[RMDB]
RNA sequence: GGGAACGACUCGAGUAGAGUCGAAAACGGUGACAAUCUUCGAGUAAGCUCCGCCAUCGAACGGAUGAAGGUAAUGUGCGAGACCUCGAAGCUGGAGGCCGCUCAUGUCUGCACCUACCUGAACGGCUACAUGACAUCUGUUCGCAGAUGUCAUGUAAAAAGAAACAACAACAACAAC
Reactivity to 2A3 in 0.01 (KOAc 150mM, MgCl2 10mM, bicine 150mM(pH8.5), 24C), signal-to-noise 8, nucleotides 027 to 126: c030g020g050u060g050a030c030a040a080u030c030u030u020c020g030a050g040u110a100a050g040c020u030c030c060g010c030c000a080u070c050g120a090a120c080g110g070a090u140g090a180a060g100g010u170a080a030u060g050u070g050c030g020a050g060a210c000c000u010c010g010a040a020g020c010u070g040g020a040g030g020c010c000g020c010u000c010a050u090g040u030c020u050g000c020a030c010c000u050a050c010c010u020g070a060a020c040g020g000c010
Reactivity to DMS in 0.01 (KOAc 150mM, MgCl2 10mM, bicine 150mM(pH8.5), 24C), signal-to-noise 4, nucleotides 027 to 126: c110g010g020u020g030a070c110a080a080u020c020u000u000c020g010a050g000u020a090a100g030c050u000c040c020g010c050c030a050u020c100g000a080a130c110g020g000a100u040g010a050a100g000g000u030a060a030u000g000u030g000c020g000a030g010a080c060c010u000c000g040a040a060g010c250u000g000g000a060g000g010c030c020g000c020u000c020a030u010g010u010c040u000g010c050a060c020c030u010a080c010c010u010g000a060a080c090g000g000c060